[RMDB]
RNA sequence: GGGAACGACUCGAGUAGAGUCGAAAACGGAAGCCUCGUCGCGUUCGGCUCCGAGAGCACCAGCCAGGCGGGGUUGCGUUACGCCUCGGCCUUCCCGGAGGCCUACAAGGAGGAUUUCGAAGCGGCGGACGGUCUGGUCGACCUGCACCGGCUGGAGUACUACCAGUUCAUUCGUGAACUGGUAGUAAAAAGAAACAACAACAACAAC
Reactivity to DMS in 0.01 (KOAc 150mM, MgCl2 10mM, bicine 150mM(pH8.5), 24C), signal-to-noise 2, nucleotides 027 to 156: c060g030g010a150a060g000c010c010u000c040g000u000c040g000c080g010u010u010c070g030g020c010u000c020c020g010a080g030a120g010c060a160c050c030a070g000c010c010a050g000g020c000g040g000g020g040u000u000g000c080g000u000u010a110c020g020c000c030u000c020g050g000c020c060u000u000c030c040c060g020g010a110g020g020c040c030u000a040c040a160a160g020g010a070g070g000a060u010u000u000c030g020a100a100g000c090g020g050c030g010g000a060c030g030g000u010c000u030g030g020u010c060g000a070c020c040u000g020c020a090c010c000g000g010c040u000g010g020a230g000
Reactivity to 2A3 in 0.01 (KOAc 150mM, MgCl2 10mM, bicine 150mM(pH8.5), 24C), signal-to-noise 2, nucleotides 027 to 156: c030g040g030a110a000g030c000c000u080c020g060u050c050g030c050g100u070u060c100g050g010c010u040c020c020g010a030g010a020g040c030a050c030c010a010g020c000c020a030g040g000c040g020g020g010g020u090u100g010c010g040u050u090a090c040g020c000c010u080c040g020g000c000c010u080u080c020c020c000g080g010a010g010g080c000c000u130a120c110a130a050g060g010a010g030g010a100u070u070u180c060g030a070a030g030c010g010g010c000g000g020a010c000g020g040u060c040u050g120g000u060c030g010a080c030c000u060g030c060a080c030c000g030g000c010u030g000g000a020g030

Conditions: 150 mM KOAc, 10 mM MgCl2 and 150 mM bicine (pH 8.5), 24 C. The record gives the reactivity of an RNA of 207 nucleotides to DMS and 2A3. For 2A3 the reverse transcriptase was SuperScript II with manganese. For DMS, 4,323 sequencing reads were counted.